[RMDB]
RNA sequence: GGGAACGACUCGAGUAGAGUCGAAAAGAUGGAAGUAGUUCUACUCGGUCACUAUGGAUUGCCAGACCAAACGCCACCUUCAGCAGCCCGUGAUCAGUUCGGGGAUGAAGCUCGAGAAGAACUUGCCGAGCUCGCGCAAUCGCUUGAGGAUGUAGAAUAUUCUAUUUGCGUUCGCGCAAAUAGAAUAAAAAGAAACAACAACAACAAC
Reactivity to DMS in 0.01 (KOAc 150mM, MgCl2 10mM, bicine 150mM(pH8.5), 24C), signal-to-noise 2, nucleotides 027 to 156: g020a110u010g020g030a170a100g030u000a120g010u000u010c000u000a030c020u000c040g030g010u010c010a190c150u010a110u000g040g010a120u000u000g020c010c000a180g030a090c040c020a070a050a120c040g010c080c060a050c070c050u000u010c030a060g000c000a180g030c000c030c030g040u000g030a030u000c120a120g030u010u000c030g000g020g010g010a110u000g010a090a120g020c040u000c010g000a120g020a140a140g020a060a060c060u010u000g000c100c000g000a060g020c010u000c070g000c050g000c060a100a120u060c000g020c050u000u020g030a030g010g010a030u000g010u030a070g000a150a190
Reactivity to 2A3 in 0.01 (KOAc 150mM, MgCl2 10mM, bicine 150mM(pH8.5), 24C), signal-to-noise 3, nucleotides 027 to 156: g160a040u250g030g050a040a020g010u020a010g000u030u030c000u010a010c000u000c010g020g010u020c000a010c020u100a100u150g060g020a100u050u080g040c020c020a070g040a090c020c000a080a030a090c050g010c010c000a030c030c040u060u080c010a020g010c010a020g030c020c010c010g050u050g050a140u200c090a040g100u160u080c010g000g000g020g040a010u060g030a060a000g000c010u020c020g090a130g020a200a030g040a050a080c070u080u090g040c020c000g000a000g000c020u010c020g000c000g000c010a010a120u050c050g020c040u020u040g020a000g050g040a050u100g030u120a050g080a130a040
Structure probing data (DMS and 2A3) for a 207-nucleotide construct. For 2A3 the reverse transcriptase was SuperScript II with manganese. It was measured as part of the RMDB library OK3TST. The DMS profile rests on 2,412 reads.